[RMDB]
RNA sequence: GGGAACGACUCGAGUAGAGUCGAAAACAUCCACUGCUACGGCAGUGGAUGAACGAGGUAGGUACGCCUACCUCGAAAGAUGGAUGUUGUCAUAGACAUUAAACGUCCAUGGUACGCCAUGGACGAAAUUUACGUAUCGAUUCGUCGAUACGUAAAUAAAAGAAACAACAACAACAAC
Reactivity to DMS in 0.01 (KOAc 150mM, MgCl2 10mM, bicine 150mM(pH8.5), 24C), signal-to-noise 8, nucleotides 027 to 126: c010a010u000c000c000a010c000u000g010c000u000a090c220g040g010c000a000g020u000g000g000a000u000g010a040a100c020g010a010g000g000u000a000g010g020u000a090c300g020c000c000u000a000c000c000u000c000g010a020a050a090g000a130u010g010g010a070u000g000u000u000g010u000c150a140u010a190g010a040c050a040u010u000a050a100a200c020g000u000c000c000a010u000g000g010u000a080c250g030c000c000a010u000g000g010a010c000g000a010a020
Reactivity to 2A3 in 0.01 (KOAc 150mM, MgCl2 10mM, bicine 150mM(pH8.5), 24C), signal-to-noise 4, nucleotides 027 to 126: c000a010u000c000c000a000c010u010g000c000u020a080c190g190g000c000a000g000u000g010g010a010u010g000a000a010c010g000a000g010g000u000a000g000g030u040a020c200g070c020c000u000a000c000c000u000c000g000a010a000a000g080a030u200g100g020a040u040g010u050u020g050u060c050a110u100a100g070a060c030a060u110u170a110a130a060c020g000u010c000c010a000u010g020g000u040a060c250g030c050c000a000u000g000g000a000c010g000a010a010